About this RNA: Conditions: 150 mM KOAc, 10 mM MgCl2 and 150 mM bicine (pH 8.5), 24 C. Structure probing data (2A3 and DMS) for a 177-nucleotide construct. The data come from the RNA Mapping Database (RMDB), library OK1LIB. Reactivities are given for positions 27 through 126. The DMS profile rests on 4,137 reads.
RNA sequence: GGGAACGACUCGAGUAGAGUCGAAAAUCUGGACUACCCUGCAGGGACCUCAGGAUCUCCGAUCCUAGACAAAUGUGGAAGAGUGAUAGGACUCUAUGGCAAUGGGGUUGUGAUCAAGAAUGGAAGCCAAAUUGGGUUCUUUCGAGAACCCAAUUUGAAAAGAAACAACAACAACAAC
Reactivity to 2A3 in 0.01 (KOAc 150mM, MgCl2 10mM, bicine 150mM(pH8.5), 24C), signal-to-noise 3, nucleotides 027 to 126: u020c020u010g020g050a030c030u080a100c050c010c000u050g020c080a080g070g070g000a090c040c010u050c060a000g120g030a050u010c140u040c060c100g030a040u000c000c000u040a070g040a060c050a060a180a120u170g090u160g070g110a040a000g030a010g030u030g020a150u150a160g040g030a030c010u000c020u040a110u030g050g000c040a060a130u030g000g000g030g000u000u010g020u020g020a040u120c080a040a040g040a130a060u190g080g060a040a030g040c040
Reactivity to DMS in 0.01 (KOAc 150mM, MgCl2 10mM, bicine 150mM(pH8.5), 24C), signal-to-noise 3, nucleotides 027 to 126: u000c070u030g000g020a070c060u000a050c030c010c000u000g010c090a050g000g010g000a080c110c030u010c100a050g010g000a020u010c060u050c090c090g010a060u000c000c030u010a090g000a110c200a030a140a070u010g010u010g000g010a090a040g000a070g030u000g000a210u030a150g020g000a070c000u000c040u010a040u020g000g000c030a060a080u010g010g010g000g040u030u000g000u010g000a100u030c040a080a100g000a060a090u000g000g020a090a060g000c150